[RMDB]
RNA sequence: GGGAACGACUCGAGUAGAGUCGAAAAGAUAUGGAUUCCUUCACACCUUCUUGGAUUUAUCGGAAACGAUUGUCAGAAGUUGUGACUGGGAAUCCUAAGUCAAAAGCUGAAGCUUCGGCUUCAGCAAGAAUAUAGUAAACUUCGGUUUACUAUAUUCAAAAGAAACAACAACAACAAC
Reactivity to 2A3 in 0.01 (KOAc 150mM, MgCl2 10mM, bicine 150mM(pH8.5), 24C), signal-to-noise 4, nucleotides 027 to 126: g020a020u070a050u120g000g000a000u010u010c000c000u020u010c010a000c000a000c020c000u010u060c020u120u250g190g010a070u300u300u250a030u080c020g000g030a040a070a040c020g020a010u020u020g010u030c000a000g000a000a000g010u020u020g000u010g010a030c150u100g060g010g000a010a000u000c000c000u000a090a020g040u020c040a040a080a090a110g000c000u000g010a000a000g020c010u050u200c300g100g000c000u000u000c040a000g000c010a000a010
Reactivity to DMS in 0.01 (KOAc 150mM, MgCl2 10mM, bicine 150mM(pH8.5), 24C), signal-to-noise 5, nucleotides 027 to 126: g000a040u010a300u010g010g000a010u000u000c000c000u000u000c000a010c000a020c050c000u000u000c000u010u020g030g010a010u000u000u000a000u010c010g020g000a150a100a220c010g000a010u000u000g010u000c000a020g000a020a010g000u010u000g010u000g000a020c300u000g020g010g000a010a000u000c000c000u000a020a100g000u010c040a090a080a100a150g010c000u000g010a010a010g010c000u000u000c230g020g000c000u000u000c000a010g000c010a020a030